RNA sequence: GGGAACGACUCGAGUAGAGUCGAAAAGAGUUCUCUUUUCUUUUUAACAAGCAUAUCCUACCUUGGAAACGGAUUAUCCGGCGAUAAGGAGGAUGCCUUGGCAAAGCACUUUACUUUUUGAAGUGUCUCCGAUACUGAUUUUCGAAUCAGUAUCGGAAAAAGAAACAACAACAACAAC
Reactivity to 2A3 in 0.01 (KOAc 150mM, MgCl2 10mM, bicine 150mM(pH8.5), 24C), signal-to-noise 7, nucleotides 027 to 126: g070a000g030u070u010c040u010c000u040u010u010u020c010u040u040u010u010u060a030a040c010a000a000g020c010a030u010a080u300c010c010u120a300c000c000u010u000g010g010a030a050a020c010g020g000a070u140u100a090u300c000c020g060g010c060g040a020u020a040a000g000g000a000g000g000a000u000g000c010c010u010u010g030g060c270a040a010a030g000c000a000c010u020u040u090a110c040u070u200u120u120u290g010a000a010g000u000g020u020c010
Reactivity to DMS in 0.01 (KOAc 150mM, MgCl2 10mM, bicine 150mM(pH8.5), 24C), signal-to-noise 4, nucleotides 027 to 126: g000a250g010u010u010c010u000c010u020u000u010u000c000u010u010u000u000u000a040a060c000a000a000g020c060a050u020a170u000c000c000u000a100c000c000u000u000g010g030a140a160a020c000g020g000a290u030u010a100u020c000c000g000g020c010g020a300u030a020a000g000g000a040g000g000a000u010g000c280c020u000u000g000g010c130a030a060a040g000c000a010c000u010u000u000a110c300u000u040u020u030u010g000a000a010g000u000g000u010c030